[RMDB]
RNA sequence: GGGAACGACUCGAGUAGAGUCGAAAAUCGCUCCAGGUUUCCCCGGGGAUCCCUGAAGCGCUCCUCCGAGCCGCCUUCUUUUUUCUUUUCUGCUCAGGAGGUCAGGUGUGAACCACAGGAACCACGAGUUUAGUUCCGAGGAACCAACUGCGGUUCCGUGGUAGUAUAGGUUCGCCUAUACUACCACAAAAGAAACAACAACAACAAC
Reactivity to 2A3 in 0.01 (KOAc 150mM, MgCl2 10mM, bicine 150mM(pH8.5), 24C), signal-to-noise 3, nucleotides 027 to 156: u170c030g000c000u040c030c030a050g020g000u040u080u070c000c020c060c080g000g020g000g000a000u000c010c000c000u030g050a130a060g180c100g080c200u040c000c000u000c000c020g020a020g000c010c040g080c120c050u190u100c100u160u270u150u130u170u150c100u230u300u160u040c030u070g010c000u000c030a110g000g000a000g000g040u000c010a000g020g030u210g020u000g290a040a050c020c020a020c050a080g020g000a010a010c000c000a030c050g040a010g000u030u080u220a000g000u020u010c020c010g000a130g030g000a000a000c010c000a060a070c130u240g060c160g070g000u010u000c020c000